[RMDB]
RNA sequence: GGGAACGACUCGAGUAGAGUCGAAAAAACCAUAGUCUCGUGCUAGUUCGGUACUAUACAGGGAAGGGAAGUCACUCGCAUACGUGUGUGUGCAUUUCUUGCUAUUGCUGCUUAGCUUCUCUAAAACGCUUAAUGUUUCGUUCGCGAAACAUUAAGCAAAAGAAACAACAACAACAAC
Reactivity to DMS in 0.01 (KOAc 150mM, MgCl2 10mM, bicine 150mM(pH8.5), 24C), signal-to-noise 2, nucleotides 027 to 126: a040a020c010c010a110u000a010g000u000c040u000c060g020u010g010c140u010a060g000u010u010c040g020g000u010a010c040u000a030u010a060c100a080g020g010g000a070a030g000g000g010a000a030g000u000c020a020c010u000c030g020c000a020u010a080c220g030u000g020u000g000u010g040u000g000c100a030u000u010u000c020u020u000g000c020u000a120u030u010g020c280u000g000c020u010u010a110g000c030u000u010c010u000c000u000a060a020a050a120c250
Reactivity to 2A3 in 0.01 (KOAc 150mM, MgCl2 10mM, bicine 150mM(pH8.5), 24C), signal-to-noise 2, nucleotides 027 to 126: a000a010c040c020a000u070a030g020u000c030u010c090g050u090g080c060u070a100g210u140u060c040g000g020u010a040c010u000a010u040a120c210a040g070g020g000a010a020g030g010g020a030a000g030u010c000a000c020u060c030g000c020a020u020a080c250g060u010g000u000g010u000g020u000g060c020a010u020u040u000c030u030u030g000c010u050a050u170u280g060c080u010g000c010u040u000a000g000c000u000u020c000u000c000u010a070a090a010a000c080
The record gives the reactivity of an RNA of 177 nucleotides to DMS and 2A3. For 2A3, 1,974 sequencing reads were counted. Conditions: 150 mM KOAc, 10 mM MgCl2 and 150 mM bicine (pH 8.5), 24 C. For DMS the reverse transcriptase was MarathonRT.